Description: Chemical mapping of a 177-nucleotide RNA with 2A3 and DMS. For DMS, 1,453 sequencing reads were counted. 2A3 adducts were read by reverse transcription with SuperScript II with manganese. Source: RMDB library OK1LIB, as collected in RNAgym.
RNA sequence: GGGAACGACUCGAGUAGAGUCGAAAAACGGUGGAGGAAUUUCUUCAGGCGCCGCAUGAAUUUACGGAAAUGGAACUUUUUCUGCUGGCGACACCACAGCUUCCUCAACUGCGCUUAUUUCCGUACCCGAUGCCACUCGAUUCGUCGAGUGGCAUCGAAAAGAAACAACAACAACAAC
Reactivity to 2A3 in 0.01 (KOAc 150mM, MgCl2 10mM, bicine 150mM(pH8.5), 24C), signal-to-noise 4, nucleotides 027 to 126: a000c020g000g010u030g050g020a030g010g070a070a060u170u220u030c100u150u120c140a080g060g000c040g000c000c000g010c010a050u150g040a080a040u060u090u180a030c040g000g080a010a070a080u140g100g060a050a110c060u080u070u000u050u060c020u030g020c030u040g000g000c010g080a110c010a080c080c000a050c020a070g010c010u030u040c000c000u040c000a020a060c030u110g010c080g020c170u110u080a030u080u060u000c030c020g020u050a090c030c010
Reactivity to DMS in 0.01 (KOAc 150mM, MgCl2 10mM, bicine 150mM(pH8.5), 24C), signal-to-noise 1, nucleotides 027 to 126: a300c000g000g000u020g010g010a060g000g000a000a050u020u000u000c060u010u000c070a160g040g000c040g030c070c070g000c050a020u040g010a000a040u020u010u010a040c030g000g000a020a120a040u000g000g020a170a150c120u050u030u000u000u010c020u030g000c000u030g000g050c030g000a040c080a050c030c150a160c030a040g000c300u000u000c030c020u000c070a020a090c050u000g030c020g010c090u000u000a020u000u040u000c010c000g050u030a050c210c090